[RMDB]
RNA sequence: GGGAACGACUCGAGUAGAGUCGAAAAUUGAUAUCUGCUAAAACCCGGUACAUUCAUCAAUGCAGGUUAAGCCAAAGGGAUGUCCCGACCGGAGGCCGACAAUCCAGGGAACCGGAUGUCAUCACGUAAAACCGUCAGUUCUUCGGAACUGACGGAACAUCACUAACUACUUCGGUAGUUAGUGAUGAAAAGAAACAACAACAACAAC
Reactivity to DMS in 0.01 (KOAc 150mM, MgCl2 10mM, bicine 150mM(pH8.5), 24C), signal-to-noise 2, nucleotides 027 to 156: u000u010g010a050u010a010u010c010u030g020c010u000a120a060a090a270c000c010c000g010g020u010a060c020a100u000u000c060a170u010c120a060a080u010g020c030a060g020g010u000u000a120a090g020c030c010a040a300a300g000g010g010a050u000g010u000c000c030c010g010a090c010c020g000g160a300g040g000c020c040g000a050c110a020a080u010c000c000a050g010g090g020a120a110c140c010g000g000a030u000g040u000c010a060u000c000a060c060g020u010a040a040a070a210c000c000g010u000c000a030g010u000u000c020u020u010c300g020g000a040a010c000u000g020a000c020g010g000a010a020
Reactivity to 2A3 in 0.01 (KOAc 150mM, MgCl2 10mM, bicine 150mM(pH8.5), 24C), signal-to-noise 4, nucleotides 027 to 156: u050u010g010a010u030a020u060c010u030g030c050u070a060a040a150a210c010c010c020g040g040u150a120c060a140u100u270c080a100u110c050a160a130u130g030c030a010g020g010u030u040a030a000g000c000c010a020a010a010g010g010g000a030u020g020u020c000c000c000g030a020c000c000g020g020a010g000g000c000c010g000a010c030a120a070u080c120c040a040g010g020g030a020a060c030c000g000g000a030u040g040u040c020a040u100c040a050c100g110u130a010a050a030a150c010c010g000u000c000a000g010u010u000c000u030u070c150g090g000a000a000c000u000g000a000c000g000g000a000a000